[RMDB]
RNA sequence: GGGAACGACUCGAGUAGAGUCGAAAACAUCACGGUGGUUCUUGUCAUGUAGGGAUUGAAUCCAUAGGAUCUCCACUUUGAACUGCACAGUAGGCAGCCUCCUUGGGGUCUGCAUUUUGCCACGGGGGACAAUGUAAACCUUCGGGUUUACAUUGUCAAAAGAAACAACAACAACAAC
Reactivity to DMS in 0.01 (KOAc 150mM, MgCl2 10mM, bicine 150mM(pH8.5), 24C), signal-to-noise 3, nucleotides 027 to 126: c110a130u020c070a070c120g000g040u010g000g000u020u010c020u010u000g000u000c100a030u020g030u020a080g010g000g000a030u010u020g000a090a210u020c060c060a130u040a120g000g000a050u000c010u030c010c030a120c050u020u000u010g010a050a050c070u000g000c020a030c090a040g010u010a060g010g000c040a030g000c030c010u000c030c060u000u020g020g030g010g000u000c010u000g000c030a040u000u010u000u000g010c010c020a040c090g000g020g010g000
Reactivity to 2A3 in 0.01 (KOAc 150mM, MgCl2 10mM, bicine 150mM(pH8.5), 24C), signal-to-noise 6, nucleotides 027 to 126: c030a040u170c040a020c060g050g020u020g010g020u030u040c020u060u120g100u090c040a100u110g060u110a090g020g000g060a040u030u110g060a130a030u030c040c010a080u130a120g050g020a030u060c020u000c030c010a060c020u080u050u130g050a070a040c010u040g020c040a020c000a120g110u130a060g050g040c020a010g020c010c010u040c010c010u080u150g020g000g000g010u010c010u030g010c010a020u070u070u070u070g020c010c010a020c010g010g000g000g010